[RMDB]
RNA sequence: GGGAACGACUCGAGUAGAGUCGAAAAGGGGAGGGAUAGCAUUAGGAGAAAUACCUAAUGUAGAUGACAGAUAAUCUUAUGUGUCUUAAACUUUGCAGGCACAAAAUCCAGCUAAUGUAUGGAGUUUCACUUUCUAAUACAUGCAAGUUAACCUGCAAUUAAAUCGCACUUUCGAGUGCGAUUUAAUAAAAGAAACAACAACAACAAC
Reactivity to DMS in 0.01 (KOAc 150mM, MgCl2 10mM, bicine 150mM(pH8.5), 24C), signal-to-noise 2, nucleotides 027 to 156: g010g010g010g020a110g010g000g000a140u010a090g000c000a040u010u000a010g000g020a110g010a180a120a270u040a040c000c050u000a000a040u010g020u000a090g020a110u000g010a100c060a070g000a090u010a050a190u020c090u000u000a040u010g020u000g000u000c020u000u020a070a080a070c060u000u010u000g020c050a000g000g000c010a070c060a050a050a090a130u010c030c040a060g020c040u010a140a050u000g030u000a030u000g000g000a080g010u000u000u000c090a060c130u010u000u000c020u000a030a060u000a030c020a030u000g020c100a050a090g030u000u010a110a020c050c010u000g010c030a060
Reactivity to 2A3 in 0.01 (KOAc 150mM, MgCl2 10mM, bicine 150mM(pH8.5), 24C), signal-to-noise 2, nucleotides 027 to 156: g000g010g030g040a040g000g010g010a070u120a040g000c000a000u000u000a020g000g020a050g050a060a130a050u300a050c000c000u010a000a010u000g000u000a010g020a140u130g000a010c020a030g110a060u100a110a040u080c140u210u150a110u180g100u010g020u010c010u050u150a170a290a230c010u080u000u050g010c030a000g000g000c050a000c020a040a030a040a060u070c080c030a000g020c070u150a180a040u020g050u040a060u010g040g020a050g050u110u180u140c110a080c050u130u220u090c010u010a040a000u030a010c020a000u050g050c030a000a120g000u040u060a010a070c010c000u000g030c010a000

An RNA of 207 nucleotides, treated with DMS and 2A3 and read out base by base. It was measured as part of the RMDB library OK3TST. For DMS the reverse transcriptase was MarathonRT. 2A3 adducts were read by reverse transcription with SuperScript II with manganese.